[RMDB]
Description:
An RNA of 177 nucleotides, treated with DMS and read out base by base. Reactivities are given for positions 27 through 126. The data come from the RNA Mapping Database (RMDB), library M2PK50.
RNA sequence: GGGAACGACUCGAGUAGAGUCGAAAAGCAAAUACCUUCGGGUAUUUGCAAAAAGUUUACCACUGACCGAUAUGUGGUAUAUUAAUGGUCGGGUUGAUCAAAAAAGGUGGGGCUUCGGCCCCACCAACUAAGUGGUGUAGUUCGCUACACCACUUAGAAAAGAAACAACAACAACAAC
Reactivity to DMS in 0.01 (KOAc 150mM, MgCl2 10mM, bicine 150mM(pH8.5), 24C), signal-to-noise 1, nucleotides 027 to 126: g030c000a020a030a000u000a010c000c000u000u010c220g030g000g000u010a000u000u000u000g020c000a000a010a070a170a050g030u020u000u000a030c000c000a020c010u010g000a230c020c020g000a100u000a030u000g000u000g000g000u000a010u010a050u000u010a080a100u000g000g010u000c020g000g000g020u010u010g020a060u020c030a010a090a080a100a070a130g000g010u000g000g010g020g030c010u000u020c280g040g010c010c010c000c000a000c010c000a010a040